[RMDB]
RNA sequence: GGGAACGACUCGAGUAGAGUCGAAAAGCCGGUCGCGGACGGACACGGGACAGCAAACAGCGACUGGGAUCGUCAUCUCGGCUUGUUCGCGUGACCGGGAGAUCCAAGUAGAGACAUAGCGGACUGCACACGGAGAAGCCCUACUGACUCGACACAGGGUACGAAACUGGUUCGCCAGUUUCGUACCAAAAGAAACAACAACAACAAC
Reactivity to 2A3 in 0.01 (KOAc 150mM, MgCl2 10mM, bicine 150mM(pH8.5), 24C), signal-to-noise 1, nucleotides 027 to 156: g080c000c000g000g000u000c050g010c040g030g150a140c040g010g010a010c010a030c090g000g010g010a040c080a030g200c090a130a130a050c060a070g040c010g080a020c060u230g020g050g100a190u060c010g120u110c030a030u020c010u000c000g000g120c070u060u300g020u010u000c010g000c000g040u000g060a000c000c000g000g000g000a060g010a040u020c000c000a050a020g000u010a020g040a020g010a030c010a050u030a030g090c190g090g040a090c010u040g000c080a040c000a020c130g040g000a150g010a010a030g000c000c010c000u050a090c080u050g120a070c020u040c050g060a000c040a040c140a170g130